Record summary: Conditions: 150 mM KOAc, 10 mM MgCl2 and 150 mM bicine (pH 8.5), 24 C. An RNA of 170 nucleotides, treated with DMS and 2A3 and read out base by base. In probing experiments dimethyl sulfate is read out at A N1 and C N3, which are open when not base-paired. The DMS profile rests on 23,829 reads. For 2A3, 18,535 sequencing reads were counted.
[RMDB]
RNA sequence: GGGAACGACUCGAGUAGAGUCGAAAAAGGAGAAAGCGGAGAAGUCACCUCCAGAGAAACCCUCUCCAACGAACAAAGAAGACCGCUGGGGCGCCAGGAAGAGUCCGUAGCGAUAGGAGGGGAUGCUGACGGAAGUUGUUCGCAACUUCCAAAAGAAACAACAACAACAAC
Reactivity to DMS in 0.01 (KOAc 150mM, MgCl2 10mM, bicine 150mM(pH8.5), 24C), signal-to-noise 6, nucleotides 027 to 129: a030g040g030a010g020a050a060a070g040c050g020g030a010g000a050a030g040u010c080a080c010c000u020c060c070a100g000a120g000a110a100a070c120c030c020u020c000u010c040c030a100a110c070g000a090a110c150a050a100a070g000a080a070g000a080c070c090g000c050u010g000g070g000g000c120g040c060c090a090g030g010a080a080g000a070g030u030c000c000g040u030a010g030c040g020a080u060a020g020g010a020g030g020g000g010a040u020g000c040u000g040a130c080
Reactivity to 2A3 in 0.01 (KOAc 150mM, MgCl2 10mM, bicine 150mM(pH8.5), 24C), signal-to-noise 8, nucleotides 027 to 129: a000g030g000a020g010a030a070a010g050c040g020g010a040g010a100a020g020u020c020a040c070c010u000c000c010a010g010a010g010a100a080a040c010c010c000u010c000u000c010c010a050a060c070g060a070a010c040a150a100a050g090a040a020g060a070c010c040g000c070u050g000g000g020g020c060g040c030c040a050g040g030a040a030g010a020g040u020c020c010g120u070a010g030c030g030a040u090a080g010g000a020g010g010g000g010a020u090g040c030u050g010a040c070